[RMDB]
RNA sequence: GGGAACGACUCGAGUAGAGUCGAAAAAAAGCCAAAAGAGACAGGUACAGCUGCUUCCUUUUCGUCGUCCUCUUCAACUGUCGUCCUUUCAUCCAAUAAUGAUGGCAGCUUUGAUGCUCUUUGGGACCGUCCCAUUACGCUUCGGCGUAAUGGGACGAAAAGAAACAACAACAACAAC
Reactivity to 2A3 in 0.01 (KOAc 150mM, MgCl2 10mM, bicine 150mM(pH8.5), 24C), signal-to-noise 2, nucleotides 027 to 126: a000a000a000g120c020c030a040a040a000a070g140a000g070a040c020a060g000g060u190a060c020a060g000c000u040g010c010u120u060c000c000u000u040u070u070c070g000u000c000g060u050c040c000u060c010u060u020c060a130a050c000u080g000u040c000g060u030c000c030u190u060u030c090a210u040c020c010a130a080u270a060a140u120g050a000u030g030g000c020a010g000c050u000u160u140g070a060u060g010c020u040c040u150u040u010g000g060g000a000c080